The record gives the reactivity of an RNA of 177 nucleotides to DMS. Values cover nucleotides 27 to 126. The RNA was probed in 150 mM KOAc, 10 mM MgCl2 and 150 mM bicine (pH 8.5) at 24 C.
RNA sequence: GGGAACGACUCGAGUAGAGUCGAAAAAAAUUUGGUCAAAGUAUUCGAGAAGAAGGUCCACAAAGCCAUAUGAAGAAGACUGGUACACCAACGAUGGGUGGACUAACAUUUCUAUUAAGUAUUGUGAUCUAUAAAACGACUUCGGUCGUUUUAUAGAAAAAGAAACAACAACAACAAC
Reactivity to DMS in 0.01 (KOAc 150mM, MgCl2 10mM, bicine 150mM(pH8.5), 24C), signal-to-noise 2, nucleotides 027 to 126: a100a070a050u020u000u000g000g010u000c010a180a060a110g000u010a040u010u000c140g000a100g020a100a080g000a120a130g010g000u000c050c030a030c070a090a050a210g000c000c020a020u010a070u000g000a140a100g000a060a030g000a060c190u040g010g040u000a060c050a090c000c040a060a050c250g000a150u000g020g000g030u000g020g010a020c030u010a050a160c130a090u000u010u010c010u000a130u020u000a060a050g000u000a110u000u000g000u000g000a110